[RMDB]
RNA sequence: GGGAACGACUCGAGUAGAGUCGAAAAGUAAUGAUCGCUGGUCGAAGGAAGAAGCCAUGCAGAAAGAUACGGGACGAUAUGAUGGCGAAUGAUACUCUUUCAUGGUGGUCUUGGGAGUCUUAGAAUCAUGCGUGAACGUAUUCGUACGUUCACGCAUAAAAGAAACAACAACAACAAC
Reactivity to 2A3 in 0.01 (KOAc 150mM, MgCl2 10mM, bicine 150mM(pH8.5), 24C), signal-to-noise 2, nucleotides 027 to 126: g030u080a110a050u050g050a000u000c020g030c040u040g000g070u150c100g010a030a010g030g050a020a030g010a030a010g000c010c000a040u140g050c010a020g070a060a110a000g030a010u090a100c070g010g020g040a010c020g030a020u020a020u240g060a030u050g040g090c060g020a120a010u140g130a010u070a080c080u050c000u070u020u010c010a020u030g010g000u000g030g000u040c000u000u020g040g010g040a050g030u000c000u000u070a050g090a150a050u090c030
Reactivity to DMS in 0.01 (KOAc 150mM, MgCl2 10mM, bicine 150mM(pH8.5), 24C), signal-to-noise 2, nucleotides 027 to 126: g020u000a130a110u010g000a060u000c060g020c040u000g010g000u000c120g010a120a060g000g020a060a100g010a110a200g000c030c020a030u000g000c090a050g000a050a040a130g010a130u000a070c090g000g000g010a110c060g000a120u000a040u000g030a040u000g000g070c050g000a070a040u000g000a120u010a080c100u000c040u010u000u000c050a070u000g010g020u000g000g000u000c040u010u000g020g010g000a100g020u000c010u000u000a100g000a070a100u030c130
Structure probing data (2A3 and DMS) for a 177-nucleotide construct. The reactions ran in a buffer of 150 mM KOAc, 10 mM MgCl2 and 150 mM bicine (pH 8.5), at 24 C. DMS adducts were read by reverse transcription with MarathonRT.